[RMDB]
RNA sequence: GGGAACGACUCGAGUAGAGUCGAAAAGCCCAGAAGCCUCCCCUCAAAAUCGUUUCAGUCCGAAAUUGAUUCGGCGGCCCUGUCAUGAGGCCGAAACGAAGGCACGUACCCCUUCGAAUGGCGUCGGAACUUUCAGUCGUAUUCGUACGACUGAAAAGUUAUGAAUUCGGUUCGCCGAAUUCAUAACAAAAGAAACAACAACAACAAC
Reactivity to 2A3 in 0.01 (KOAc 150mM, MgCl2 10mM, bicine 150mM(pH8.5), 24C), signal-to-noise 1, nucleotides 027 to 156: g050c040c010c020a050g150a110a050g090c000c000u010c000c010c020c030u010c020a040a090a020a040u120c030g020u020u060u140c090a110g100u110c000c000g010a040a070a110u280u300g070a200u080u040c030g000g010c000g000g030c000c000c000u030g000u060c030a100u020g030a030g000g000c000c000g020a000a000a000c000g010a000a000g020g000c070a000c130g150u190a130c000c000c000c010u030u010c000g030a030a000u030g000g000c000g000u060c020g040g040a050a060c000u000u000u000c000a000g000u000c000g000u000a030u000u050c100g010u050a000c000g000a000c000u000g000a000a000a000a000
Reactivity to DMS in 0.01 (KOAc 150mM, MgCl2 10mM, bicine 150mM(pH8.5), 24C), signal-to-noise 2, nucleotides 027 to 156: g000c010c000c010a150g030a130a200g010c020c030u000c020c020c010c030u000c040a040a090a120a100u000c040g020u010u000u000c030a130g010u000c040c080g000a030a060a210u000u000g020a230u000u000c010g010g040c030g030g000c010c010c020u000g000u000c160a080u000g010a080g010g040c000c000g020a010a020a070c010g020a040a050g000g020c060a150c080g000u010a150c060c040c000c010u000u000c040g000a080a160u000g000g000c060g000u000c020g000g030a100a150c070u000u000u000c000a020g020u000c000g030u010a050u000u010c280g000u000a010c000g000a040c000u000g000a000a010a030a130